[RMDB]
RNA sequence: GGGAACGACUCGAGUAGAGUCGAAAAAUGUCAGCGGUGAAAGCCACGUCGGGUGUCGAUUGAAGUACAAACCCAGGCCCAUAAUGAGUCUUCAAACCUUGACCAACGUCCGAAUUCUCGAGCUGAACGUUGGUUAAAAGUUCGCUUUUAACCAACGAAAAGAAACAACAACAACAAC
Reactivity to 2A3 in 0.01 (KOAc 150mM, MgCl2 10mM, bicine 150mM(pH8.5), 24C), signal-to-noise 3, nucleotides 027 to 126: a000u120g040u050c000a020g010c020g090g000u050g030a140a040a010g020c020c010a030c040g070u030c040g060g010g000u080g020u040c020g030a060u000u120g080a050a030g030u140a050c050a040a100a040c000c010c010a020g100g030c000c020c010a040u080a070a100u160g050a020g030u010c000u040u010c010a090a100a120c000c020u030u110g020a020c030c010a040a030c040g020u000c020c000g010a030a050u110u000c030u030c030g020a040g030c020u000g040a060a020
Reactivity to DMS in 0.01 (KOAc 150mM, MgCl2 10mM, bicine 150mM(pH8.5), 24C), signal-to-noise 4, nucleotides 027 to 126: a060u010g020u000c060a070g030c030g010g020u010g010a100a070a100g000c010c040a060c090g010u000c070g020g000g020u010g000u010c070g010a120u000u000g000a040a070g010u010a060c100a040a070a110c050c010c010a090g010g000c030c020c020a080u000a070a070u000g000a170g010u010c020u000u000c060a040a060a080c080c050u010u010g020a060c040c040a050a060c060g010u000c040c030g000a060a130u010u000c040u010c030g000a110g020c080u000g010a050a130
An RNA of 177 nucleotides, treated with 2A3 and DMS and read out base by base. The data come from the RNA Mapping Database (RMDB), library OK2TRN. For DMS, 4,168 sequencing reads were counted. The 2A3 profile rests on 3,255 reads.